[RMDB]
RNA sequence: GGGAACGACUCGAGUAGAGUCGAAAAGCCCGCCAGCAAGAGGCCCUGGGAGUACUUUGGUGAAUGCCGGUAGUACAAAGACCGUGAUGGGCACAGUCCAGCAGUCUGUGAAGGGUGCUGGCGCCGCGGUACGCUAAAACUUCGGUUUUAGCGUACCAAAAGAAACAACAACAACAAC
Reactivity to 2A3 in 0.01 (KOAc 150mM, MgCl2 10mM, bicine 150mM(pH8.5), 24C), signal-to-noise 1, nucleotides 027 to 126: g050c000c000c080g000c000c010a030g010c010a100a030g060a030g300g000c000c000c030u050g140g000g000a100g040u020a000c030u060u060u100g040g000u110g220a300a080u300g020c000c000g080g000u060a010g000u020a000c000a070a240a020g010a020c000c010g000u080g170a150u100g050g000g000c090a030c050a100g080u010c040c010a010g010c020a030g200u000c000u090g110u060g100a070a010g030g010g010u070g000c010u000g010g030c030g000c020c060g050c090
Reactivity to DMS in 0.01 (KOAc 150mM, MgCl2 10mM, bicine 150mM(pH8.5), 24C), signal-to-noise 2, nucleotides 027 to 126: g010c000c050c000g010c030c010a020g020c040a210a090g020a230g000g010c000c010c010u000g000g050g010a200g020u000a000c010u010u000u010g020g050u010g000a230a050u010g000c000c010g030g010u020a060g020u000a020c020a070a100a040g010a040c010c040g050u010g000a120u010g010g000g010c050a080c140a040g010u010c000c010a070g030c000a080g000u000c000u000g000u010g020a160a030g000g000g010u000g000c020u000g010g000c020g010c100c080g010c160
This 177-nucleotide RNA was probed chemically with 2A3 and DMS. The 2A3 profile rests on 1,049 reads. The DMS profile rests on 1,349 reads. High 2A3 reactivity points to a flexible backbone, as in loops and unpaired stretches. Reactivities are given for positions 27 through 126.